[RMDB]
RNA sequence: GGGAACGACUCGAGUAGAGUCGAAAAACACCGCCCACCUCCAGCUGUGGAGCUAACUCCCGCUGGGAGGACAUCGGUAGGUGGGCAGUUUGGGUGGGGCGCCACUCCCCCGAAAAGGUAUCGGGGGCAGUUUAGUGUAGUUCGCUACACUAAACUGAAAAGAAACAACAACAACAAC
Reactivity to DMS in 0.01 (KOAc 150mM, MgCl2 10mM, bicine 150mM(pH8.5), 24C), signal-to-noise 6, nucleotides 027 to 126: a050c080a080c040c030g010c000c000c010a020c010c000u000c000c000a050g010c030u020g030u070g020g010a020g020c100u020a120a240c010u000c010c000c010g030c180u030g010g000g000a030g000g000a050c120a050u030c150g010g010u020a020g010g030u000g010g010g030c000a020g000u000u010u010g000g010g020u010g010g000g000g010c080g010c050c030a080c080u010c000c000c000c000c000g000a010a070a130a100g010g020u020a080u000c010g000g000g000g010g010
Reactivity to 2A3 in 0.01 (KOAc 150mM, MgCl2 10mM, bicine 150mM(pH8.5), 24C), signal-to-noise 7, nucleotides 027 to 126: a000c040a010c010c030g000c000c000c000a010c000c000u010c000c010a010g000c030u130g060u300g230g070a020g000c020u100a140a120c000u010c010c010c030g140c130u140g010g040g000a030g010g030a010c030a090u130c060g050g040u100a030g000g010u000g000g010g020c000a020g010u030u100u090g060g000g010u070g010g010g000g030c060g030c020c010a040c050u070c000c000c000c000c000g020a060a060a020a050g220g030u170a070u070c010g000g000g010g000g000
Source information: Chemical mapping of a 177-nucleotide RNA with DMS and 2A3. Conditions: 150 mM KOAc, 10 mM MgCl2 and 150 mM bicine (pH 8.5), 24 C. It was measured as part of the RMDB libraries RFM100 and RFMREP. DMS adducts were read by reverse transcription with MarathonRT. 2A3 adducts were read by reverse transcription with SuperScript II with manganese.